This 177-nucleotide RNA was probed chemically with 2A3 and DMS.
The data come from the RNA Mapping Database (RMDB), library TTRDES.
2A3 adducts were read by reverse transcription with SuperScript II with manganese.
The reactions ran in a buffer of 150 mM KOAc, 10 mM MgCl2 and 150 mM bicine (pH 8.5), at 24 C.
For 2A3, 3,171 sequencing reads were counted.
RNA sequence: GGGAACGACUCGAGUAGAGUCGAAAAAAGAUAUGGAGCCACUGUGCUCAUCGAUCUAUGGUGAUAGCUGUAUAUCGGAAACGAUAUACCGAAGCCAUAGGGAGAGCUGUGUGGCUCCUAAGUCAAAGAUGUAAGGUUGGUUCGCCAACCUUACAUCAAAAGAAACAACAACAACAAC
Reactivity to 2A3 in 0.01 (KOAc 150mM, MgCl2 10mM, bicine 150mM(pH8.5), 24C), signal-to-noise 1, nucleotides 027 to 126: a000a000g000a010u030a010u010g010g000a000g000c020c030a030c040u080g110u150g110c010u020c000a000u300c000g000a000u020c000u010a000u000g000g010u150g100a300u120a130g030c000u020g010u010a010u000a000u000c000g000g000a010a010a000c010g010a000u000a000u010a010c000c010g020a000a020g010c010c000a000u000a000g000g010g000a030g020a000g030c040u040g040u030g000u000g300g000c000u010c000c010u000a000a010g010u000c000a000a000a120
Reactivity to DMS in 0.01 (KOAc 150mM, MgCl2 10mM, bicine 150mM(pH8.5), 24C), signal-to-noise 1, nucleotides 027 to 126: a050a070g000a010u000a030u010g000g000a010g030c000c000a010c000u010g000u010g000c000u000c000a300u010c260g010a000u030c000u000a000u000g000g020u000g010a200u020a120g000c030u000g020u020a000u000a000u000c000g010g000a000a000a040c000g010a000u000a000u010a000c010c050g010a030a300g010c000c000a010u000a000g010g010g000a010g020a030g030c010u000g010u060g030u000g000g000c010u000c000c000u000a000a040g000u010c010a040a090a200